RNA sequence: GGGAACGACUCGAGUAGAGUCGAAAAAGAUGUGUGACUCAUGUGAGUAGCCACAAGUGAUGAUAUUUCUCCAUAUCAUCCACACAUGGAGAAUGUGUGACUCAUGUGACUACCCACAAGUGAUGAUAAGCCUCGUUAUCAUCCACACAUCACGAGGCGUAAGUAGCUAGUUCGCUAGCUACUUACGAAAAGAAACAACAACAACAAC
Reactivity to 2A3 in 0.01 (KOAc 150mM, MgCl2 10mM, bicine 150mM(pH8.5), 24C), signal-to-noise 2, nucleotides 027 to 156: a000g010a000u000g000u000g010u000g020a030c020u030c160a100u020g000u000g000a010g000u000a010g010c000c000a000c000a010a030g070u020g050a000u000g000a000u000a020u010u090u060c120u000c020c000a000u000a000u010c010a000u000c000c020a000c000a000c010a010u010g050g040a130g090a090a000u010g010u000g000u010g030a020c010u030c130a040u050g000u000g000a000c000u000a000c000c000c010a010c000a010a030g050u010g030a020u020g000a000u000a020a000g040c030c050u080c050g060u000u000a000u000c000a000u000c000c010a000c000a000c000a010u000c010a010c040g030a040g040g060
Reactivity to DMS in 0.01 (KOAc 150mM, MgCl2 10mM, bicine 150mM(pH8.5), 24C), signal-to-noise 2, nucleotides 027 to 156: a060g010a010u000g040u010g010u000g010a240c140u010c100a160u010g030u050g000a040g020u010a000g030c000c010a010c010a090a060g020u010g010a030u000g000a060u000a040u000u000u010c090u010c140c140a180u010a030u000c040a040u000c060c050a090c040a030c000a020u000g010g000a170g010a120a010u000g030u000g030u000g010a190c110u000c100a090u010g010u000g010a050c020u000a010c000c010c010a040c000a040a090g010u000g010a130u000g010a010u000a010a040g030c090c070u000c070g020u000u000a030u000c020a000u000c000c050a080c010a040c020a040u000c020a060c010g010a100g000g000